[RMDB]
This 177-nucleotide RNA was probed chemically with 2A3 and DMS. Values are in units of 0.01, from 0 to 300, in steps of 10.

RNA sequence: GGGAACGACUCGAGUAGAGUCGAAAAGAUGUAGAUUUGAGCCAGUAGGACUGUGAUUGACCCAGUGCUCUUACUGACUUAACUGACAAAGUAGCAUUAAAGCAGGACUAGUGGGUUUCAGUCUAGGACUAAACUUAGCCUUCGGGCUAAGUUUAGUAAAAGAAACAACAACAACAAC
Reactivity to 2A3 in 0.01 (KOAc 150mM, MgCl2 10mM, bicine 150mM(pH8.5), 24C), signal-to-noise 2, nucleotides 027 to 126: g170a050u120g030u180a010g000a000u120u020u190g010a010g000c020c020a010g130u020a000g000g030a000c000u020g010u040g070a110u100u200g070a080c000c080c000a000g000u000g000c030u000c010u040u040a150c050u020g070a010c000u020u080a070a070c300u050g020a030c030a000a090a000g000u130a090g040c010a000u030u130a140a060a010g000c000a020g000g000a010c000u000a020g180u110g010g080g040u060u150u040c000a000g000u000c020u060a050g030g070
Reactivity to DMS in 0.01 (KOAc 150mM, MgCl2 10mM, bicine 150mM(pH8.5), 24C), signal-to-noise 3, nucleotides 027 to 126: g020a150u010g020u000a000g010a030u010u010u010g010a040g000c000c000a030g010u000a000g000g020a050c000u000g000u000g000a250u020u010g000a170c100c080c080a130g020u000g000c030u040c030u010u000a070c200u000g000a060c020u000u000a090a130c140u000g010a050c050a040a050a040g000u000a020g000c010a020u000u010a030a090a280g010c010a020g000g010a050c010u010a030g010u010g000g000g010u000u000u010c020a030g010u000c000u000a040g000g010
Notes:
Values cover nucleotides 27 to 126. Conditions: 150 mM KOAc, 10 mM MgCl2 and 150 mM bicine (pH 8.5), 24 C. For 2A3 the reverse transcriptase was SuperScript II with manganese.